[RMDB]
The record gives the reactivity of an RNA of 177 nucleotides to 2A3 and DMS.
The reactions ran in a buffer of 150 mM KOAc, 10 mM MgCl2 and 150 mM bicine (pH 8.5), at 24 C.
DMS (dimethyl sulfate) methylates the pairing face of unpaired adenines and cytosines.
For DMS, 4,010 sequencing reads were counted.
The 2A3 profile rests on 4,070 reads.
The data come from the RNA Mapping Database (RMDB), library TTRDEL.
RNA sequence: GGGAACGACUCGAGUAGAGUCGAAAAGAUAUGGAAUAAGCAACAGCGGUGACAUCGGAAACGAUGUACCGACAUGCUUUUCCUAAGUCAAAAUCAGGCUAUAGACGUUCGCGUCUAUAGCCUGAAAGAAUAAGUAAAACUUCGGUUUUACUUAUUCAAAAGAAACAACAACAACAAC
Reactivity to 2A3 in 0.01 (KOAc 150mM, MgCl2 10mM, bicine 150mM(pH8.5), 24C), signal-to-noise 2, nucleotides 027 to 126: g030a010u080a030u140g040g040a040a050u240a300a030g000c010a020a170c110a200g070c010g110g000u090g200a050c010a000u020c010g040g000a060a030a010c010g000a010u010g000u000a000c020c000g050a010c010a010u040g000c000u000u000u010u000c000c000u010a100a020g040u060c040a030a010a030a260u020c000a000g000g010c000u030a020u000a030g020a000c020g020u090u080c300g050c000g150u000c010u020a010u010a020g010c000c000u000g000a000a000a000
Reactivity to DMS in 0.01 (KOAc 150mM, MgCl2 10mM, bicine 150mM(pH8.5), 24C), signal-to-noise 4, nucleotides 027 to 126: g010a040u010a300u010g000g000a030a000u010a010a010g010c010a020a080c290a180g000c020g010g000u000g010a030c000a000u000c000g010g000a110a090a130c000g010a000u000g010u000a010c000c000g000a060c070a170u000g000c000u000u000u000u000c000c000u010a030a120g000u000c020a080a060a110a160u000c000a000g010g010c000u000a000u000a000g000a010c010g010u000u010c270g010c020g010u000c000u000a000u000a000g000c040c010u000g000a000a010a080